[RMDB]
RNA sequence: GGGAACGACUCGAGUAGAGUCGAAAAAUAUGUCCAGGCCUAAAUCGGAAAGGAUCGUCACUGCCAGAAGAUCACUGAAUCAUGCUUUGACCUUGAUGUUCUUAGAAGAGGUCACAUUGCCUGAGCUGAAAGCCUUUUCCGUUAACUGUAAAAUGGGCUACUCGACAUAGUUCGCUAUGUCGAGUAGAAAAGAAACAACAACAACAAC
Reactivity to 2A3 in 0.01 (KOAc 150mM, MgCl2 10mM, bicine 150mM(pH8.5), 24C), signal-to-noise 6, nucleotides 027 to 156: a000u100a050u130g060u010c010c010a020g050g050c010c030u100a110a100a070u070c010g020g000a030a010a010g020g010a070u090c080g050u050c140a040c120u060g000c030c010a030g020a120a020g010a060u040c030a050c290u150g110a130a010u030c010a030u120g020c030u040u040u070g010a020c010c010u040u030g020a070u070g130u300u070c110u120u190a040g010a100a010g010a020g000g000u020c000a000c010a040u050u050g000c000c000u030g010a040g060c020u040g020a090a020a030g010c000c000u040u040u070u070c000c020g010u040u050a070a110c030u060g160u260a000a010a030a150u080g000g010g020
Reactivity to DMS in 0.01 (KOAc 150mM, MgCl2 10mM, bicine 150mM(pH8.5), 24C), signal-to-noise 2, nucleotides 027 to 156: a160u000a070u010g010u000c030c030a050g000g030c020c050u000a020a100a110u010c030g050g000a080a080a040g000g000a050u000c050g020u000c020a040c050u010g000c060c060a130g020a090a120g000a050u020c040a300c060u010g000a100a100u020c040a130u000g030c050u000u010u010g010a020c010c020u000u000g030a070u020g030u000u000c110u000u010a160g000a120a300g010a030g010g000u000c050a040c090a070u020u010g010c020c030u010g000a050g040c040u010g000a070a060a050g010c040c000u000u000u000u000c010c000g040u010u010a070a090c070u000g010u000a000a070a060a100u020g050g010g010
Structure probing data (2A3 and DMS) for a 207-nucleotide construct. Reactivities are given for positions 27 through 156. The reactions ran in a buffer of 150 mM KOAc, 10 mM MgCl2 and 150 mM bicine (pH 8.5), at 24 C. For DMS, 4,121 sequencing reads were counted. The 2A3 profile rests on 3,374 reads.